[RMDB]
RNA sequence: GGGAACGACUCGAGUAGAGUCGAAAACUAAAAGUGUUACCUGUCCAGAUUAUGUAAUCCACGGAGUAGGCUUCAGGUGUUCAGAAACGGCAACUCUUGAUAUUUUAGUGUCAGGUAAAAGCAGGUACAUAGAAACCCAAGAACUAGAGUAUCAAUAGGUCUAUUUAUACUUCGGUAUAAAUAGACCAAAAGAAACAACAACAACAAC
Reactivity to DMS in 0.01 (KOAc 150mM, MgCl2 10mM, bicine 150mM(pH8.5), 24C), signal-to-noise 1, nucleotides 027 to 156: c070u010a010a100a100a140g010u010g000u010u010a040c010c010u000g020u010c040c050a130g010a130u000u010a090u020g000u010a050a070u000c070c020a150c010g000g020a120g010u000a120g040g040c020u010u010c030a110g000g010u000g010u030u010c000a130g010a030a100a120c090g010g020c080a070a120c070u000c010u000u010g000a030u000a020u000u000u000u000a100g010u000g020u000c100a100g040g010u010a070a070a040a210g040c010a010g010g000u010a040c040a180u000a130g010a090a070a150c030c000c020a020a200g000a050a100c020u000a010g010a080g030u000a010u010c010a040a100u000a160
Reactivity to 2A3 in 0.01 (KOAc 150mM, MgCl2 10mM, bicine 150mM(pH8.5), 24C), signal-to-noise 1, nucleotides 027 to 156: c030u090a050a050a030a090g040u010g020u050u020a050c000c000u010g050u080c040c020a020g020a150u130u020a090u190g150u130a050a080u050c040c020a050c040g000g010a050g000u080a040g110g050c010u060u080c030a050g000g000u020g030u150u100c080a050g060a100a060a030c020g050g060c020a030a020c010u010c000u070u060g020a020u000a060u070u070u090u100a060g000u040g110u100c090a080g010g000u060a120a020a000a040g030c030a000g020g030u050a070c050a020u140a020g090a050a060a020c000c030c020a040a030g040a020a000c000u020a030g000a000g060u010a000u120c000a090a010u110a180